RNA sequence: GGGAACGACUCGAGUAGAGUCGAAAAACUGGCGGUUACGACCGCCAGAAGAAAUGAAGACUAAAAAACCGGCUGAGAUAAGUGAUGACGACGUCUCGCACUGAUCACGUCGGAUACGUCCGACGAACAUCGGUAUGUAGUUCGCUACAUACCGAUGAAAAGAAACAACAACAACAAC
Reactivity to DMS in 0.01 (KOAc 150mM, MgCl2 10mM, bicine 150mM(pH8.5), 24C), signal-to-noise 3, nucleotides 027 to 126: a120c010u000g010g020c000g020g010u000u000a100c210g010a060c030c010g010c000c000a000g020a040a040g000a060a070a050u000g010a190a090g000a040c060u000a000a070a080a050a090a090c040c060g010g020c060u040g040a080g020a070u000a070a070g000u000g010a080u050g010a040c060g010a110c210g000u010c060u000c070g010c040a020c100u000g010a080u010c110a110c080g000u010c000g010g000a050u000a040c150g000u000c000c000g000a090c110g020a070a130
Reactivity to 2A3 in 0.01 (KOAc 150mM, MgCl2 10mM, bicine 150mM(pH8.5), 24C), signal-to-noise 9, nucleotides 027 to 126: a010c010u010g000g000c020g010g020u040u060a090c240g050a020c060c010g000c000c000a000g000a010a000g020a000a080a010u210g050a050a050g050a050c120u190a060a030a040a030a040a080c060c050g060g000c060u100g020a010g020a120u110a200a050g040u040g130a180u140g090a050c060g030a010c080g050u010c010u000c020g010c010a070c070u060g030a050u110c060a010c110g010u000c000g000g010a010u020a050c190g040u000c010c000g010a010c010g010a050a020